Description: This 207-nucleotide RNA was probed chemically with DMS and 2A3. 2A3 adducts were read by reverse transcription with SuperScript II with manganese. Source: RMDB library OK3TST, as collected in RNAgym. Values cover nucleotides 27 to 156. Conditions: 150 mM KOAc, 10 mM MgCl2 and 150 mM bicine (pH 8.5), 24 C.

RNA sequence: GGGAACGACUCGAGUAGAGUCGAAAACGCAUCUGCGAUGACUGGUUAGAAUACUGACGAGUCUUGGGCGGCAUCGGGGGCGGCAUCGGACCCGGCACAUUGUGCUCCGCGGGUUCUGGCCCACCUACGUUGUAGUAGGGCGUAGAACAGUGAAACGUAUAUCCACUAUGUUCGCAUAGUGGAUAUAAAAAGAAACAACAACAACAAC
Reactivity to DMS in 0.01 (KOAc 150mM, MgCl2 10mM, bicine 150mM(pH8.5), 24C), signal-to-noise 3, nucleotides 027 to 156: c050g020c040a130u000c040u020g010c010g010a090u010g000a050c000u000g010g020u000u000a060g010a240a220u010a140c060u000g020a050c050g000a050g020u000c000u010u000g010g010g030c050g040g000c060a080u010c060g010g000g010g010g010c100g030g090c080a100u000c070g010g010a080c010c010c000g010g000c040a050c030a180u000u010g030u000g030c030u000c040c050g030c050g040g000g030u000u000c010u000g020g020c030c020c010a050c030c000u000a020c020g000u000u000g030u000a130g030u000a040g020g010g020c030g030u000a050g000a050a080c060a090g010u000g010a070a080a070c080g010
Reactivity to 2A3 in 0.01 (KOAc 150mM, MgCl2 10mM, bicine 150mM(pH8.5), 24C), signal-to-noise 4, nucleotides 027 to 156: c050g050c030a060u050c040u110g010c030g110a090u110g040a030c020u060g030g060u040u020a060g070a290a230u160a300c020u030g020a020c030g080a030g000u000c000u070u080g020g000g000c020g030g010c030a060u070c040g010g000g000g020g040c040g040g030c030a050u120c070g040g000a030c000c030c000g000g050c000a020c020a150u230u300g020u010g010c030u090c110c070g090c010g030g010g000u020u000c010u020g050g000c000c000c010a050c000c000u030a030c010g070u060u220g070u070a090g000u010a020g000g050g010c040g010u020a030g030a070a030c050a060g040u050g120a110a040a000c030g010